[RMDB]
RNA sequence: GGGAACGACUCGAGUAGAGUCGAAAAUUCGGUCUCCCGCGAUCCUGUCGAUCUCUUUGGGAUAGCUCGCCUCACUUACGAGCUGGGGGAUUUCGUCCUUGCGGAAUCGAGGACGCGGGAACUCCUCCACUGAUACGUUUUUCGAAACGUAUCAGUGAAAAGAAACAACAACAACAAC
Reactivity to 2A3 in 0.01 (KOAc 150mM, MgCl2 10mM, bicine 150mM(pH8.5), 24C), signal-to-noise 8, nucleotides 027 to 126: u060u050c060g040g030u030c060u000c090c010c000g000c010g070a300u000c030c010u200g160u220c020g010a020u010c020u000c000u240u090u120g000g000g010a010u020a030g020c010u010c030g300c020c000u030c020a030c010u050u130a050c180g120a040g050c090u010g000g000g000g000g030a000u060u060u080c060g010u000c000c000u030u070g060c090g040g010a020a010u010c000g000a000g000g000a000c000g000c000g010g000g000a000a000c000u010c000c000u030c020
Reactivity to DMS in 0.01 (KOAc 150mM, MgCl2 10mM, bicine 150mM(pH8.5), 24C), signal-to-noise 6, nucleotides 027 to 126: u000u010c110g020g000u000c100u000c000c000c010g010c020g010a110u000c010c010u000g010u020c020g000a030u000c110u000c010u000u000u000g010g000g000a020u000a040g010c170u000c010g010c050c040u000c110a080c130u010u010a120c130g010a050g020c290u000g000g010g000g010g000a140u000u010u000c090g020u000c000c010u000u000g020c200g010g010a040a020u000c010g000a060g000g010a040c010g000c060g000g000g000a030a020c020u000c040c010u000c120
This 177-nucleotide RNA was probed chemically with 2A3 and DMS. The DMS profile rests on 10,880 reads. The 2A3 profile rests on 19,402 reads. 2A3 adducts were read by reverse transcription with SuperScript II with manganese. The data come from the RNA Mapping Database (RMDB), library OK2TST. DMS adducts were read by reverse transcription with MarathonRT.